[RMDB]
RNA sequence: GGGAACGACUCGAGUAGAGUCGAAAAAGGCCACCGAGAUGAAGCUGGUGACGCUCUACAUCCUGGCGAUGCCCAUCGCCCUGCUGAGUUUCGCCGCCGCGUCGGUGCUGAUCUCCUCCGCGCUGGCGCCAGUUGGAAUAUUCGUAUUCCAACUGGCAAAAGAAACAACAACAACAAC
Reactivity to 2A3 in 0.01 (KOAc 150mM, MgCl2 10mM, bicine 150mM(pH8.5), 24C), signal-to-noise 4, nucleotides 027 to 126: a000g100g000c140c050a010c000c050g110a120g030a240u270g160a170a040g040c160u190g090g060u030g020a020c020g000c030u000c010u040a050c040a090u130c020c050u010g000g020c020g010a020u100g110c030c060c020a020u010c010g010c000c000c020u030g020c030u070g010a030g020u020u020u050c020g010c010c000g040c070c010g020c030g110u040c030g010g020u020g020c010u030g030a100u020c020u000c020c000u050c040c030g080c020g010c030u020g010g000c000
Reactivity to DMS in 0.01 (KOAc 150mM, MgCl2 10mM, bicine 150mM(pH8.5), 24C), signal-to-noise 5, nucleotides 027 to 126: a130g010g020c210c050a040c030c020g000a140g010a150u010g010a210a130g040c050u000g070g000u000g010a030c060g010c020u010c020u000a070c110a050u010c120c100u010g010g010c010g010a020u000g010c080c090c090a200u000c020g010c030c010c180u000g020c080u010g000a060g000u000u000u000c020g000c020c020g010c060c060g000c060g020u010c020g000g010u010g020c030u000g000a080u010c050u000c020c030u010c030c050g010c080g020c020u000g010g010c240

About this RNA
This 177-nucleotide RNA was probed chemically with 2A3 and DMS. As a SHAPE reagent, 2A3 marks flexible, mostly unpaired nucleotides at the ribose 2'-OH. The RNA was probed in 150 mM KOAc, 10 mM MgCl2 and 150 mM bicine (pH 8.5) at 24 C. The data come from the RNA Mapping Database (RMDB), library OK2TRN.